[RMDB]
RNA sequence: GGGAACGACUCGAGUAGAGUCGAAAACCACAGCUUCGGCUGUGGGAAAACUCCUAAGUCGAGUGGUCUUGUCAGGACGAUAAGUAUCGGAAACGAUACUUUUGACGUCCUUGGAUUUAGCCUCGAUAUGGAAACACCAGACGAUUCGUCGUCUGAACUUCGAUACUGUGUUCGCACAGUAUCGAAGAAAAGAAACAACAACAACAAC
Reactivity to 2A3 in 0.01 (KOAc 150mM, MgCl2 10mM, bicine 150mM(pH8.5), 24C), signal-to-noise 4, nucleotides 027 to 156: c000c000a000c000a000g040c000u090u170c260g190g000c000u000g000u000g010g000g000a070a060a020a040c080u060c020c010u050a140a050g030u010c000g000a010g030u140g040g080u160c020u060u080g020u000c020a000g000g010a000c010g010a040u010a100a000g000u000a000u010c010g020g010a060a040a060c020g000a010u000a000c000u020u000u030u070g090a030c000g000u000c000c000u000u070g030g010a020u170u070u250a020g010c010c000u010c000g000a010u000a040u090g050g060a100a140a020c070a100c070c000a000g020a000c020g010a020u070u080c210g050u010c010g020u000c170u020g020a050a060
Reactivity to DMS in 0.01 (KOAc 150mM, MgCl2 10mM, bicine 150mM(pH8.5), 24C), signal-to-noise 1, nucleotides 027 to 156: c000c000a000c000a000g000c010u000u000c300g110g000c010u000g030u000g030g000g000a050a040a050a140c090u000c000c000u000a040a300g010u000c020g010a020g040u020g020g000u000c040u000u040g000u000c060a080g000g020a010c000g050a220u010a020a020g040u000a000u000c000g030g000a170a140a280c030g000a010u000a010c000u000u000u000u000g010a300c120g000u010c000c000u000u000g010g020a120u000u050u000a090g010c110c000u000c030g020a020u010a200u000g010g020a090a120a140c030a130c020c000a020g020a020c000g000a120u010u010c240g010u000c010g010u000c000u040g020a090a120

The record gives the reactivity of an RNA of 207 nucleotides to 2A3 and DMS. High DMS reactivity at an A or C suggests that its Watson-Crick edge is free. The DMS profile rests on 2,184 reads. The 2A3 profile rests on 3,372 reads. Source: RMDB library RNAMAK, as collected in RNAgym.